Record summary
This 177-nucleotide RNA was probed chemically with 2A3. 2A3 adducts were read by reverse transcription with SuperScript II with manganese. The reactions ran in a buffer of 150 mM KOAc, 10 mM MgCl2 and 150 mM bicine (pH 8.5), at 24 C.

[RMDB]
RNA sequence: GGGAACGACUCGAGUAGAGUCGAAAAAUGCCGCAUUCAGGGACGGUUACUCUAGUGGGCCACUGUCGAUCUAGCGUUGACAUCUACAUACUAUAUAGUAAUACCAAUACUCAAGACUACGAAACGGCGGCCAUACUAUCUUCGGAUAGUAUGGCCGAAAAGAAACAACAACAACAAC
Reactivity to 2A3 in 0.01 (KOAc 150mM, MgCl2 10mM, bicine 150mM(pH8.5), 24C), signal-to-noise 1, nucleotides 027 to 126: a000u100g070c040c000g000c010a060u110u000c000a040g000g000g090a090c010g080g000u020u000a070c000u000c000u060a040g040u050g010g060g000c000c000a090c030u090g110u120c000g000a000u000c030u110a000g190c000g110u000u040g020a050c000a000u010c000u000a010c050a010u040a010c040u030a000u090a070u130a180g000u030a000a000u040a160c010c000a010a090u000a010c020u040c010a000a150g120a130c040u050a000c110g110a100a020a000c050g040g000